Chemical mapping of a 177-nucleotide RNA with 2A3.
RNA sequence: GGGAACGACUCGAGUAGAGUCGAAAACAAACCCGCCAAUCGGGAGCACAUCAAAAUUGUUCACGUCGUGCUCCCCGCAACGACCUGAAGAAAGUUGCGAGACGUGAACCAGCAAAGGCGGGAAUAAAUCGACGUCCUCAUUCGUGAGGACGUCGAUAAAAGAAACAACAACAACAAC
Reactivity to 2A3 in 0.01 (KOAc 150mM, MgCl2 10mM, bicine 150mM(pH8.5), 24C), signal-to-noise 1, nucleotides 027 to 126: c030a010a010a210c000c000c000g060c030c000a020a300u170c190g000g040g000a000g000c000a030c000a130u300c150a050a000a190a270u050u080g000u000u000c000a000c010g050u050c000g000u140g000c000u000c000c000c000c000g000c000a000a000c000g120a040c000c110u240g130a100a000g000a000a290a000g000u000u000g030c000g000a000g000a000c000g000u120g000a000a000c000c000a000g100c000a020a010a020g010g000c000g000g000g110a030a030u010a000a000